[RMDB]
RNA sequence: GGGAACGACUCGAGUAGAGUCGAAAACGAACUAGUCCAAGCCGAUUCUCAAAAUCAUAUAAAAUCAUUUACACCUUGGUCAUGGUAGCUAAGAAUAUUGUAUCUAAAAUUGGGGAGUGGGGAGAUGCACACGUUGACUUUUCGAAGUCAACGUGUGAAAAGAAACAACAACAACAAC
Reactivity to 2A3 in 0.01 (KOAc 150mM, MgCl2 10mM, bicine 150mM(pH8.5), 24C), signal-to-noise 4, nucleotides 027 to 126: c060g040a000a020c030u010a010g030u000c020c000a000a000g000c010c000g030a030u100u030c090u000c030a000a090a180a160u180c100a030u110a030u080a210a110a010a040u080c040a030u020u040u040a050c040a040c000c010u080u080g030g020u020c020a090u080g110g020u030a030g040c050u030a090a030g040a130a030u110a050u130u110g060u050a010u000c050u060a040a100a140a110u110u050g000g010g000g010a040g050u070g000g020g040g000a050g000a000u100g020
Reactivity to DMS in 0.01 (KOAc 150mM, MgCl2 10mM, bicine 150mM(pH8.5), 24C), signal-to-noise 3, nucleotides 027 to 126: c080g000a110a160c100u010a080g010u020c040c010a060a090g020c020c090g020a090u030u010c030u030c040a060a070a050a050u060c150a050u040a120u060a060a080a040a030u040c020a100u000u000u020a040c130a080c030c020u020u000g020g000u010c040a070u030g000g010u000a040g030c060u030a020a020g000a110a110u000a070u010u020g020u030a050u020c050u000a040a080a030a110u020u090g010g020g000g000a060g040u010g010g000g000g000a050g040a080u000g000